[RMDB]
RNA sequence: GGGAACGACUCGAGUAGAGUCGAAAAGCAAAUCCAAGGCUCAAAACAAAAGUAAAUGCGAACAAUAUCGUAAAAUUUGCUCGUAAGGAAGCCCUAGUUGCUGCCUAAUAGCCUCUUAUAGGUCCGAGCGUCUUUAGUCCGACUCCGUUAAGGGCUAGUCGGAUCAUAUGUUCGCAUAUGAUCCGACAAAAGAAACAACAACAACAAC
Reactivity to DMS in 0.01 (KOAc 150mM, MgCl2 10mM, bicine 150mM(pH8.5), 24C), signal-to-noise 1, nucleotides 027 to 156: g000c060a040a050a040u000c030c050a060a110g040g010c000u000c010a090a050a120a230c090a070a100a030a070g040u010a020a060a140u000g000c000g000a000a050c000a060a110u010a130u010c040g000u010a060a210a030a150u000u010u000g010c000u010c000g000u010a080a120g000g010a090a050g040c000c000c040u000a220g020u000u000g010c000u000g020c000c030u010a040a150u000a080g000c010c010u010c020u000u000a130u000a260g030g010u030c020c020g000a030g030c030g000u000c120u000u000u000a150g000u000c000c000g000a090c000u000c030c030g020u020u000a030a060g040g030g000c010u010a090
Reactivity to 2A3 in 0.01 (KOAc 150mM, MgCl2 10mM, bicine 150mM(pH8.5), 24C), signal-to-noise 3, nucleotides 027 to 156: g010c000a030a010a080u100c040c020a020a030g020g000c010u040c090a010a070a050a060c040a020a080a060a010g040u070a020a070a050u040g040c010g020a030a040c090a280a060u150a090u160c040g020u070a090a110a010a080u030u040u040g000c000u020c030g070u060a000a060g020g020a090a040g010c000c000c000u030a030g040u060u060g010c000u010g020c000c000u050a090a070u070a060g010c010c000u160c020u130u120a100u070a180g020g040u030c060c010g030a010g040c040g100u060c040u060u170u110a060g000u000c020c000g020a060c050u040c050c010g010u010u050a020a050g000g000g000c000u000a020